[RMDB]
RNA sequence: GGGAACGACUCGAGUAGAGUCGAAAAGAGCAACUUAGGAUUUUAGGCUCCCCGGUGCGUCUCGAACCGCGCCGGGCCAAACCCACAGGGGCUGGCGGUCCUGUGUGGUCAAAAUCUUUCCGCUGGAAUACCUAUCCCAGUUUCGACUGGGAUAGAACGAGGAAUCAGGAUUCGUCCUGAUUCCUCGAAAAGAAACAACAACAACAAC
Reactivity to 2A3 in 0.01 (KOAc 150mM, MgCl2 10mM, bicine 150mM(pH8.5), 24C), signal-to-noise 1, nucleotides 027 to 156: g030a010g000c010a010a180c080u030u050a080g080g060a030u030u020u100u070a040g020g030c010u010c000c020c010c010g010g010u010g000c060g010u040c160u120c300g080a060a030c030c010g000c010g000c000c000g000g000g050c010c000a040a000a000c000c010c010a020c020a000g010g000g000g030c000u000g000g010c000g000g010u020c000c000u050g020u010g020u140g000g000u070c050a040a090a020a020u040c000u120u130u020c000c010g000c010u000g010g000a090a070u080a100c010c000u000a000u000c000c000c000a010g000u040u090u110c200g120a000c010u000g000g000g000a000u000a000g000a000a000
Structure probing data (2A3) for a 207-nucleotide construct. For 2A3, 700 sequencing reads were counted. Values cover nucleotides 27 to 156. For 2A3 the reverse transcriptase was SuperScript II with manganese.